[RMDB]
RNA sequence: GGGAACGACUCGAGUAGAGUCGAAAAUUGUUUGUAGGCGCAGCACCAUUAAGAUUCACAUGGAAAUUGAUAAAUACCCUAAAUUAGGGUUUUGAUAUGUAUAUGAGAAUCUUGAUGAUGCUGCAUCGGCUAUGUGUGAGUUCGCUCACACAUAGCCAAAAGAAACAACAACAACAAC
Reactivity to 2A3 in 0.01 (KOAc 150mM, MgCl2 10mM, bicine 150mM(pH8.5), 24C), signal-to-noise 1, nucleotides 027 to 126: u000u040g030u050u000u050g120u080a050g020g130c070g000c020a000g020c000a000c020c000a050u000u000a000a020g020a000u000u000c060a070c000a060u010g000g090a120a070a000u000u000g000a000u000a050a040a000u240a040c040c000c000u150a300a230a090u230u220a060g000g010g010u030u000u000u000g000a000u020a000u000g040u070a030u000a000u050g000a010g000a100a000u000c000u000u000g000a000u000g000a010u000g000c000u000g000c000a000u030c000

An RNA of 177 nucleotides, treated with 2A3 and read out base by base. The RNA was probed in 150 mM KOAc, 10 mM MgCl2 and 150 mM bicine (pH 8.5) at 24 C.